[RMDB]
RNA sequence: GGGAACGACUCGAGUAGAGUCGAAAAGAAAGAAAGAAAGUUCAGUGUUUAUCGGAAACUUUAAACUAUAACCAUUCAAACUUUUCCAGAAGUUAGUUUGAAUAGAAAUUAAAAAGAAACUUCUGAAUAACCUUAUCAUGCUUCGGCAUGAUAAGAACAUAUAGGAUUUGUUCGCAAAUCCUAUAUGAAAAGAAACAACAACAACAAC
Reactivity to 2A3 in 0.01 (KOAc 150mM, MgCl2 10mM, bicine 150mM(pH8.5), 24C), signal-to-noise 2, nucleotides 027 to 156: g060a010a050a010g100a040a090a020g080a070a080a010g030u060u050c060a070g060u040g030u100u260u140a180u220c030g040g040a090a010a010c000u030u060u070a130a120a000c020u030a040u050a270a050c030c030a010u000u000c010a000a000a000c000u030u020u000u030c130c000a000g000a010a000g010u000u000a000g000u000u030u000g000a000a010u060a130g010a000a070a010u150u220a050a120a000a020a000g010a000a000a000c000u000u000c000u000g030a010a060u060a030a010c020c000u000u000a000u000c000a000u010g000c010u020u040c190g080g000c000a000u000g000a000u000a000a000g000a000a000